[RMDB]
RNA sequence: GGGAACGACUCGAGUAGAGUCGAAAACGGGCUAAGUUGCUGUGUGGCAAGUGAUUUGAUCACCAUGCCGUGAGUGACGUGGUUAAUCAGGUCUUUAUCCAGCGGCCAGGAGAGAAACAGAUGCAUACCAUAAUGAUAGGUUCGCCUAUCAUUAUGGAAAAGAAACAACAACAACAAC
Reactivity to DMS in 0.01 (KOAc 150mM, MgCl2 10mM, bicine 150mM(pH8.5), 24C), signal-to-noise 9, nucleotides 027 to 126: c090g010g000g010c030u010a080a110g010u000u000g010c010u000g020u000g040u000g000g010c100a090a140g010u000g010a020u000u010u010g010a040u000c140a030c000c050a070u000g010c010c010g010u000g010a090g020u000g010a020c020g030u000g010g010u000u000a060a060u000c040a050g010g010u000c030u000u000u010a100u010c050c030a100g010c090g000g010c020c050a070g000g000a070g010a080g000a070a050a070c090a060g000a080u000g010c100a100u010a180
Reactivity to 2A3 in 0.01 (KOAc 150mM, MgCl2 10mM, bicine 150mM(pH8.5), 24C), signal-to-noise 9, nucleotides 027 to 126: c020g010g020g000c040u100a090a060g040u060u040g020c020u010g030u030g010u040g160g000c030a060a050g030u020g040a020u080u090u200g080a060u020c010a000c020c020a080u060g000c010c020g060u070g070a050g020u120g020a020c030g030u040g000g030u080u090a080a040u080c020a010g020g020u010c000u040u060u020a110u050c020c020a010g030c020g020g010c010c000a030g020g040a060g010a010g020a030a080a010c030a020g060a090u110g040c020a040u060a140